[RMDB]
RNA sequence: GGGAACGACUCGAGUAGAGUCGAAAAGGGCGAUACCGGGCCCGAUACCGGAAUUAGUAGUUUUCUACGAGAGGCCCAAUCUGCGGCCUAAUGCAGUGUAGGUCGAAACGAGGACCGAGACUCGAUAAUUACGUCGAUAGAUGGACGAUUGCAUCAAAUACCCUCAUUUAUUCGUAAAUGAGGGUAUAAAAGAAACAACAACAACAAC
Reactivity to 2A3 in 0.01 (KOAc 150mM, MgCl2 10mM, bicine 150mM(pH8.5), 24C), signal-to-noise 4, nucleotides 027 to 156: g000g000g010c020g010a020u040a120c000c010g000g030g000c020c000c040g030a010u020a030c000c000g000g050a070a060u140u060a050g040u010a030g020u070u100u150u110c020u040a020c030g010a020g020a040g130g010c010c000c010a010a100u080c070u080g020c080g010g000c000c000u020a040a040u070g010c010a010g040u010g010u110a010g000g030u010c010g070a060a060a070c070g000a090g110g010a010c000c050g020a010g020a010c000u000c020g010a010u080a150a050u130u090a050c030g000u000c010g030a060u070a200g110a060u090g070g010a000c020g040a060u050u200g020c020a020u020c050a040a090
Reactivity to DMS in 0.01 (KOAc 150mM, MgCl2 10mM, bicine 150mM(pH8.5), 24C), signal-to-noise 4, nucleotides 027 to 156: g010g020g010c030g020a180u000a100c040c020g030g010g010c020c000c060g010a080u000a070c010c010g020g010a130a110u010u000a100g010u000a030g010u000u010u000u000c030u010a090c020g000a140g010a160g020g000c000c000c010a070a150u010c040u010g020c030g020g030c050c040u000a020a030u000g010c060a110g010u000g020u000a160g000g010u000c010g010a080a050a190c110g020a280g020g000a070c040c000g010a200g000a090c040u000c040g010a130u010a060a090u000u000a100c050g010u000c020g040a100u000a060g010a140u000g000g010a060c030g010a120u000u010g000c020a180u010c050a050a110